[RMDB]
Chemical mapping of a 177-nucleotide RNA with 2A3 and DMS.
RNA sequence: GGGAACGACUCGAGUAGAGUCGAAAAUGAUGUAAUCUACUUCUUGAGUGUAAGACAGUCCUAGAACGUUGAUAGUAAGCUCUGCUUUACCCUCGAGUGACGCUAGCUGAUCGAAACAGAUAGUAGCCAUUGAUACGCGAUUCGUCGCGUAUCAAUGAAAAGAAACAACAACAACAAC
Reactivity to 2A3 in 0.01 (KOAc 150mM, MgCl2 10mM, bicine 150mM(pH8.5), 24C), signal-to-noise 4, nucleotides 027 to 126: u150g090a020u100g040u180a090a060u020c030u060a060c010u030u050c000u030u060g050a040g030u020g020u070a040a000g010a040c010a010g030u030c010c020u080a040g040a150a010c070g080u080u160g090a110u050a060g050u030a040a000g000c020u020c050u150g000c000u050u030u050a050c040c000c000u010c010g020a040g010u070g050a030c040g010c050u040a050g010c000u020g010a110u090c070g050a110a080a000c030a020g020a020u030a040g040u020a010g000c020
Reactivity to DMS in 0.01 (KOAc 150mM, MgCl2 10mM, bicine 150mM(pH8.5), 24C), signal-to-noise 6, nucleotides 027 to 126: u010g010a080u000g010u010a090a130u010c020u000a070c070u000u000c020u000u010g020a050g010u000g000u000a040a090g000a040c050a040g000u010c130c020u000a120g000a090a060c100g010u010u000g000a120u000a120g000u000a070a080g010c030u010c050u010g010c020u010u000u000a030c030c040c030u000c040g010a040g020u000g000a080c110g010c020u000a020g000c020u010g000a090u000c140g000a130a070a130c050a050g000a040u000a020g010u000a060g020c140
It was measured as part of the RMDB library OK2TST. The reactions ran in a buffer of 150 mM KOAc, 10 mM MgCl2 and 150 mM bicine (pH 8.5), at 24 C. For 2A3, 4,839 sequencing reads were counted.